[RMDB]
Chemical mapping of a 177-nucleotide RNA with 2A3 and DMS. The RNA was probed in 150 mM KOAc, 10 mM MgCl2 and 150 mM bicine (pH 8.5) at 24 C. The data come from the RNA Mapping Database (RMDB), library OK2TRN. High DMS reactivity at an A or C suggests that its Watson-Crick edge is free. The DMS profile rests on 1,881 reads.
RNA sequence: GGGAACGACUCGAGUAGAGUCGAAAACUGAAAGAGCUUACCCCCAUCGUCUAUAUUAGUGAGGAGGCUACACCCGAUCCGCGCGACACGCUACGUGUGGCAACCCUAAGAGAAAACCCCGAUAUCGCAUAGGGAUCAGUUUCGACUGAUCCCUAUGAAAAGAAACAACAACAACAAC
Reactivity to 2A3 in 0.01 (KOAc 150mM, MgCl2 10mM, bicine 150mM(pH8.5), 24C), signal-to-noise 1, nucleotides 027 to 126: c030u060g080a060a130a010g100a030g000c060u090u160a200c000c020c020c000c020a050u030c000g180u000c030u030a100u000a080u150u160a040g070u050g100a100g000g030a020g020g070c000u000a020c000a030c050c030c030g000a050u070c020c020g050c010g000c000g060a000c000a000c110g050c040u210a050c060g020u030g030u040g040g000c010a000a030c000c030c000u050a050a010g060a020g010a070a040a010a030c000c090c110c020g000a020u030a060u080c110g000
Reactivity to DMS in 0.01 (KOAc 150mM, MgCl2 10mM, bicine 150mM(pH8.5), 24C), signal-to-noise 3, nucleotides 027 to 126: c050u020g010a070a150a110g000a090g000c050u000u000a260c070c020c000c020c040a080u000c100g010u010c050u000a070u010a080u010u000a030g020u000g000a080g000g030a120g000g010c040u000a030c080a070c000c050c040g000a090u010c070c070g000c070g000c050g000a070c090a050c110g010c110u010a020c080g030u000g020u010g020g000c040a060a030c040c000c000u000a100a070g020a110g020a070a050a140a130c060c000c000c030g010a140u000a070u000c150g020